[RMDB]
RNA sequence: GGGAACGACUCGAGUAGAGUCGAAAAGAUGGGGCAGGUGGGAAUAUACCUCGCCGGCCACUUGCUCCUGAUUGAGAGAUAGACGGCGAGGGUCCGAUCAUACGAUAUAUUCCUGCUCAGCGUAUGAUCGGUUAUGAUACUUAAGAAGAGCAGGCUAACGAUCAUAAUAUUUCGAUAUUAUGAUCGUAAAAGAAACAACAACAACAAC
Reactivity to 2A3 in 0.01 (KOAc 150mM, MgCl2 10mM, bicine 150mM(pH8.5), 24C), signal-to-noise 5, nucleotides 027 to 156: g060a050u080g000g000g000g020c010a000g000g000u010g000g030g050a050a040u170a030u090a230c000c000u000c000g000c000c010g010g000c000c010a000c000u010u000g000c000u010c010c010u040g050a100u120u170g150a090g000a000g030a040u100a110g070a030c000g000g000c000g000a000g000g000g000u010c000c000g000a000u000c000a000u000a010c010g020a040u050a030u030a070u300u110c010c000u020g000c000u000c000a010g000c010g000u000a000u010g000a000u000c000g000g000u000u000a010u000g010a000u040a120c090u200u180a100a020g080a050a010g000a080g030c000a000g000g000c000u030a030
Conditions: 150 mM KOAc, 10 mM MgCl2 and 150 mM bicine (pH 8.5), 24 C.
Structure probing data (2A3) for a 207-nucleotide construct.